[RMDB]
RNA sequence: GGGAACGACUCGAGUAGAGUCGAAAAAAACAAGUGUUUUGUCCACUCUUGCAGUCUUCCUAGAGUAAAGUGGAGGUCUCUGUCUGCUUUAGGAGAGCCAACUAAACUGGAUCGUUCCCCUCCAUACACUCUUGCGUGUUUUCGAACACGCAAGAGUAAAAGAAACAACAACAACAAC
Reactivity to DMS in 0.01 (KOAc 150mM, MgCl2 10mM, bicine 150mM(pH8.5), 24C), signal-to-noise 2, nucleotides 027 to 126: a020a000a010c020a190a140g030u040g000u000u000u000u000g000u000c090c130a010c000u000c000u000u010g010c140a080g020u010c010u010u000c000c010u000a050g010a060g000u000a040a120a110g010u010g000g000a060g020g010u060c040u000c030u000g010u000c070u020g000c140u000u000u030a070g000g000a020g000a060g000c090c090a070a110c060u010a050a060a120c050u000g010g010a070u000c000g020u000u020c010c020c000c010u010c100c070a060u020a170c290
Reactivity to 2A3 in 0.01 (KOAc 150mM, MgCl2 10mM, bicine 150mM(pH8.5), 24C), signal-to-noise 3, nucleotides 027 to 126: a000a000a000c300a150a210g100u200g060u140u020u030u050g070u000c000c000a030c030u020c010u030u060g070c070a060g020u000c030u070u000c000c000u040a040g010a000g040u080a030a100a030g040u050g010g060a050g020g100u060c040u000c020u080g130u080c030u070g090c020u060u050u050a020g020g060a040g000a000g080c020c020a050a010c020u080a120a000a060c050u040g080g000a060u000c000g000u000u000c000c010c000c010u020c020c030a030u030a070c080